Structure probing data (DMS) for a 177-nucleotide construct.
The RNA was probed in 150 mM KOAc, 10 mM MgCl2 and 150 mM bicine (pH 8.5) at 24 C.
For DMS, 456 sequencing reads were counted.
It was measured as part of the RMDB library M2PK90.
DMS adducts were read by reverse transcription with MarathonRT.
[RMDB]
RNA sequence: GGGAACGACUCGAGUAGAGUCGAAAAUUUUCUGUCGCAGCAAAAGUCAUAAAAGGUGCUAAUAUGAUUUUAAUCGAUUUUCAAUAAAGCACAAGGCUGGACGCGCGAACUAGGCAAAUCGAACAAAUUAGGAGAGCAUAUUCGUAUGCUCUCCUAAAAAAGAAACAACAACAACAAC
Reactivity to DMS in 0.01 (KOAc 150mM, MgCl2 10mM, bicine 150mM(pH8.5), 24C), signal-to-noise 1, nucleotides 027 to 126: u000u000u000u000c000u030g030u000c100g030c010a030g090c030a060a300a110a030g010u030c010a120u010a110a050a120a230g000g060u000g030c010u000a070a070u040a090u010g000a120u000u000u010u000a000a120u030c030g000a060u020u000u000u010c040a030a050u000a060a100a060g010c020a000c000a030a050g000g000c000u010g010g030a280c120g060c030g060c090g000a030a030c010u010a060g000g010c230a000a000a040u000c030g030a030a120c250a050a100a160